[RMDB]
RNA sequence: GGGAACGACUCGAGUAGAGUCGAAAAGGCAAACACAUUCCGGUGGUCUGACACAUCAUAGUUAUGCUCCUGAGACAGGUCAUCAUAAGCCAUUUUAAUAAACUUUGGGCGGAGGGUGCCAGAUUGGGGUAUAAAUGUACCCUCGGGCCCCGGAGCAAUAUGAACAAGUGUUCGCACUUGUUCAUAUAAAAGAAACAACAACAACAAC
Reactivity to 2A3 in 0.01 (KOAc 150mM, MgCl2 10mM, bicine 150mM(pH8.5), 24C), signal-to-noise 3, nucleotides 027 to 156: g060g010c040a030a100a050c070a050c020a230u080u050c020c020g000g020u180g040g000u000c010u010g030a010c020a000c000a160u120c020a040u090a070g130u030u020a040u040g000c010u020c040c020u050g030a060g030a080c070a080g000g050u160c000a020u030c000a030u040a170a020g020c020c000a040u050u120u020u130a220a170u160a100a110a060c060u130u080u100g080g020g010c010g060g030a050g080g010g010u020g000c000c020a070g010a180u100u100g010g000g050g000u050a020u040a060a040a000u020g020u060a040c010c010c000u000c000g030g010g010c010c010c010c010g000g000a000g000c010a020
Reactivity to DMS in 0.01 (KOAc 150mM, MgCl2 10mM, bicine 150mM(pH8.5), 24C), signal-to-noise 2, nucleotides 027 to 156: g040g000c060a070a140a090c110a090c030a250u000u010c020c000g020g080u010g010g000u010c010u000g020a080c060a090c060a050u000c080a100u020a110g020u000u000a060u010g010c030u000c010c040u010g010a170g000a170c060a140g030g000u010c010a040u000c030a060u000a110a280g030c000c030a090u020u000u000u020a030a260u010a090a070a050c080u010u000u030g030g020g010c010g000g010a140g030g000g070u000g050c020c000a060g000a210u000u000g010g000g010g020u000a040u000a000a080a050u000g010u000a020c050c030c030u000c040g010g040g010c000c030c000c040g000g040a070g070c050a110